This 207-nucleotide RNA was probed chemically with DMS and 2A3. Conditions: 150 mM KOAc, 10 mM MgCl2 and 150 mM bicine (pH 8.5), 24 C.

[RMDB]
RNA sequence: GGGAACGACUCGAGUAGAGUCGAAAACAACACAACAUUGAAGAAGAACAAAGUCAGAAGACUGACAUUACUAACUUACUAAGACCUGCUAUAGAGACUUGUAAGACUUACUAUAAAGGUGCAUCCAUACAAUGGAAUAUUAUUCAGUGGGAAAAAGAAUGGAAAUCAUGUUCGCAUGAUUUCCAUUAAAAGAAACAACAACAACAAC
Reactivity to DMS in 0.01 (KOAc 150mM, MgCl2 10mM, bicine 150mM(pH8.5), 24C), signal-to-noise 2, nucleotides 027 to 156: c070a100a120c020a110c020a100a090c050a030u000u000g000a070a060g000a080a100g030a070a100c050a040a090a160g010u000c020a080g000a060a180g000a160c020u030g010a030c030a130u000u000a070c040u000a070a160c060u000u010a080c050u000a050a060g020a060c010c010u010g020c080u000a080u010a090g010a180g020a090c030u000u000g020u010a030a080g010a070c090u010u010a100c030u010a090u000a040a030a120g040g000u000g020c080a090u000c010c030a140u000a130c070a110a090u010g010g010a070a100u000a100u000u020a030u010u000c010a040g040u000g000g000g020a020a010a080a040a100g010
Reactivity to 2A3 in 0.01 (KOAc 150mM, MgCl2 10mM, bicine 150mM(pH8.5), 24C), signal-to-noise 3, nucleotides 027 to 156: c030a030a010c030a000c030a130a050c030a070u080u110g030a040a040g030a070a040g060a070a080c070a130a080a010g010u000c010a020g040a170a030g050a300c020u040g000a000c000a020u080u050a040c020u040a190a020c020u040u040a030c020u070a080a000g030a090c020c030u040g060c040u110a040u080a190g070a030g040a090c050u040u090g040u050a020a000g020a030c000u070u070a030c010u030a030u140a200a050a010g010g010u030g020c020a020u030c020c000a000u040a190c070a070a000u040g000g030a020a020u070a040u150u030a020u040u050c010a000g040u030g010g040g040a000a060a060a060a020g070